[RMDB]
Chemical mapping of a 177-nucleotide RNA with DMS and 2A3.
The reactions ran in a buffer of 150 mM KOAc, 10 mM MgCl2 and 150 mM bicine (pH 8.5), at 24 C.
Source: RMDB library OK2TRN, as collected in RNAgym.
RNA sequence: GGGAACGACUCGAGUAGAGUCGAAAACAGUUUACUAUUCAAGUAUUCAACUUGGUUGGACUUGCGAUGAUGUGCAGAGUCGACUUGUUUUCUUUGCCAAUGGGGAUGAUAUAGUGCUGGCUGUGCAGAUCGUCAUCGUUUUCGAACGAUGACGAUCAAAAGAAACAACAACAACAAC
Reactivity to DMS in 0.01 (KOAc 150mM, MgCl2 10mM, bicine 150mM(pH8.5), 24C), signal-to-noise 1, nucleotides 027 to 126: c060a120g010u010u000u020a080c060u000a140u000u000c060a050a060g020u000a070u000u000c140a070a070c000u000u000g010g020u000u000g010g010a060c050u010u000g010c090g020a070u000g020a080u010g010u010g000c020a070g000a090g030u000c010g000a100c020u000u000g000u020u000u010u000c040u000u010u000g000c030c000a050a090u010g000g000g010g000a080u010g010a080u010a030u000a070g010u000g010c050u010g030g000c040u010g030u000g030c060a060
Reactivity to 2A3 in 0.01 (KOAc 150mM, MgCl2 10mM, bicine 150mM(pH8.5), 24C), signal-to-noise 1, nucleotides 027 to 126: c000a000g000u090u080u130a090c000u080a120u050u120c010a080a030g040u000a230u030u090c020a030a070c010u090u080g100g000u040u070g090g000a030c000u000u070g000c000g100a130u110g040a030u110g110u110g020c030a010g070a010g150u030c010g040a100c000u010u000g030u020u090u060u000c000u050u110u130g040c000c020a110a080u100g000g010g000g010a020u060g040a010u040a010u000a130g020u080g050c090u090g020g050c000u040g000u010g050c000a030
2A3 adducts were read by reverse transcription with SuperScript II with manganese. For 2A3, 868 sequencing reads were counted.